[RMDB]
RNA sequence: GGGAACGACUCGAGUAGAGUCGAAAAGAUAUGGACAACGACAACAGCUUGUCCUCGGAAACGAGGGUCAAGACAUGUCGGUCCUAAGUCAAACGUAGGGAAUGCACUUCGGUGCAUUCCCUACGAAGAUUAAAAGGCAGUUCGCUGCCUUUUAAUCAAAAGAAACAACAACAACAAC
Reactivity to 2A3 in 0.01 (KOAc 150mM, MgCl2 10mM, bicine 150mM(pH8.5), 24C), signal-to-noise 2, nucleotides 027 to 126: g010a000u040a040u100g000g000a010c000a300a070c300g000a000c000a060a030c030a160g090c000u000u010g010u000c000c000u010c010g010g040a040a020a020c010g000a010g000g020g090u180c010a000a000g040a030c020a050u070g010u020c000g000g020u000c000c000u020a110a010g030u040c050a060a070a100c020g010u000a000g000g000g020a010a010u000g000c000a000c020u100u130c300g040g000u010g000c010a020u010u000c010c000c010u020a000c000g000a000a000
Reactivity to DMS in 0.01 (KOAc 150mM, MgCl2 10mM, bicine 150mM(pH8.5), 24C), signal-to-noise 6, nucleotides 027 to 126: g010a030u000a300u000g000g000a010c010a070a160c030g000a010c000a020a080c280a200g000c000u000u000g010u000c000c000u000c010g010g000a090a070a130c010g010a010g000g010g000u020c000a010a010g010a070c100a150u010g010u000c000g020g000u000c000c000u000a040a110g010u000c030a090a110a230c020g010u000a000g000g000g000a010a000u000g000c000a010c000u000u020c180g010g020u000g000c000a000u000u000c000c000c000u000a000c000g000a020a070